[RMDB]
RNA sequence: GGGAACGACUCGAGUAGAGUCGAAAAAUGAUCUUGCAAAUUGGUGUAGUUAAUGAAGCUCCAUUUUCCAGAGAGGCUAGUCCAAGAUCAGCCAUGAGCACAGCAACAGUUACUGUUAAUGUAGAAGCUAUCAUGACACAUUCGUGUGUCAUGAUAGAAAAGAAACAACAACAACAAC
Reactivity to 2A3 in 0.01 (KOAc 150mM, MgCl2 10mM, bicine 150mM(pH8.5), 24C), signal-to-noise 4, nucleotides 027 to 126: a000u070g000a020u000c010u020u060g020c030a020a060a190u060u060g000g010u060g040u070a120g040u050u140a080a100u270g090a110a010g010c020u000c020c020a050u050u070u080u000c040c020a010g040a010g000a030g140g030c020u040a020g040u030c010c020a020a000g020a040u030c010a010g070c000c010a060u080g060a030g050c040a000c010a050g020c010a010a050c020a070g050u120u100a090c050u060g030u150u080a110a100u150g050u100a060g020a160a020g020
Reactivity to DMS in 0.01 (KOAc 150mM, MgCl2 10mM, bicine 150mM(pH8.5), 24C), signal-to-noise 7, nucleotides 027 to 126: a090u000g010a030u000c020u010u000g020c110a060a090a100u010u000g010g020u010g010u010a070g010u000u000a080a090u010g000a130a150g010c040u000c020c030a070u000u000u000u000c040c040a170g010a100g010a100g020g010c040u000a070g020u000c140c020a030a060g000a030u000c030a040g010c040c030a080u010g000a070g010c070a060c060a040g000c110a030a030c070a060g000u000u000a060c050u000g010u000u000a060a160u000g010u000a070g000a150a100g010